[RMDB]
RNA sequence: GGGAACGACUCGAGUAGAGUCGAAAAAUUGGCCUUUAUCUGUCCUAAACCUCUAACAUUCCACUGUAUCUUAAUGAAACGGAGGUUCUGUUCUUUCUGCCCAGGGCUUCUGAUAAGUGUUUGCAGAUCAUUAGAUCUAGUUCGCUAGAUCUAAUGAAAAAGAAACAACAACAACAAC
Reactivity to 2A3 in 0.01 (KOAc 150mM, MgCl2 10mM, bicine 150mM(pH8.5), 24C), signal-to-noise 6, nucleotides 027 to 126: a000u060u060g040g000c010c000u050u090u060a140u060c050u050g070u040c010c010u040a100a100a100c000c010u020c020u040a070a040c020a110u090u060c020c020a040c050u050g040u060a110u070c030u060u210a190a130u190g100a120a050a040c040g000g000a000g010g000u010u020c020u020g010u040u010c010u060u130u040c060u090g020c020c000c010a010g010g020g000c000u030u000c010u040g090a110u050a210a060g040u030g040u120u070u100g060c010a010g010a080
Reactivity to DMS in 0.01 (KOAc 150mM, MgCl2 10mM, bicine 150mM(pH8.5), 24C), signal-to-noise 9, nucleotides 027 to 126: a090u010u000g010g020c030c020u000u000u010a060u010c060u000g010u000c020c020u010a070a100a100c060c010u000c040u010a090a100c090a100u000u000c050c030a100c080u000g000u000a050u010c040u000u010a070a080u010g000a070a100a120c140g010g000a030g000g000u000u000c050u000g000u000u000c050u000u000u010c080u010g010c060c160c020a050g010g010g010c020u000u000c020u000g010a100u010a050a070g010u010g010u000u010u000g010c040a040g010a170

Structure probing data (2A3 and DMS) for a 177-nucleotide construct.
For DMS, 16,636 sequencing reads were counted.
Values cover nucleotides 27 to 126.
The reactions ran in a buffer of 150 mM KOAc, 10 mM MgCl2 and 150 mM bicine (pH 8.5), at 24 C.